Structure probing data (2A3 and DMS) for a 207-nucleotide construct. Reactivities are given for positions 27 through 156. It was measured as part of the RMDB library OK3TST. The RNA was probed in 150 mM KOAc, 10 mM MgCl2 and 150 mM bicine (pH 8.5) at 24 C.
[RMDB]
RNA sequence: GGGAACGACUCGAGUAGAGUCGAAAACUGGGCCCUCUUUCGUGUCCUUUGUGCUUGUCAUUACCUCCUAGUCAGAUUGCAUAGCAAGGUGGGCAGACUGGGUGGCCUGGUGAACUUACGUAGCCUCUGUCUGUCUCAUCUUCAUUUACCCCAUGCAAUUAAAUCACGUAUUCGUACGUGAUUUAAUAAAAGAAACAACAACAACAAC
Reactivity to 2A3 in 0.01 (KOAc 150mM, MgCl2 10mM, bicine 150mM(pH8.5), 24C), signal-to-noise 5, nucleotides 027 to 156: c020u020g010g020g000c000c030c000u030c040u030u080u050c080g070u030g040u050c010c000u050u070u110g090u050g040c050u080u080g050u120c020a120u040u140a100c020c000u040c020c030u060a040g040u070c040a030g040a190u060u070g010c020a030u040a050g030c050a030a000g000g020u010g010g010g000c000a000g000a000c020u030g050g030g070u120g040g000c010c010u030g030g010u060g030a080a030c050u110u130a040c070g080u080a020g010c000c000u050c050u040g010u020c000u010g050u030c020u030c050a030u000c000u030u000c010a040u070u090u140a130c020c020c020c010a020u060g020c020a000
Reactivity to DMS in 0.01 (KOAc 150mM, MgCl2 10mM, bicine 150mM(pH8.5), 24C), signal-to-noise 4, nucleotides 027 to 156: c030u000g010g020g010c020c020c020u000c040u000u010u010c030g010u000g000u010c010c020u000u000u010g020u000g020c040u000u000g010u010c040a120u000u000a070c040c000u010c010c020u000a130g020u000c050a090g020a120u000u000g020c030a120u000a140g020c060a040a040g040g040u000g010g010g020c010a030g010a020c020u000g020g000g030u010g010g010c000c040u000g020g020u010g010a100a130c110u000u000a070c080g010u000a120g010c010c010u000c020u000g010u000c010u000g010u000c020u000c010a020u000c010u000u000c030a120u000u000u010a120c020c010c000c030a070u000g030c080a090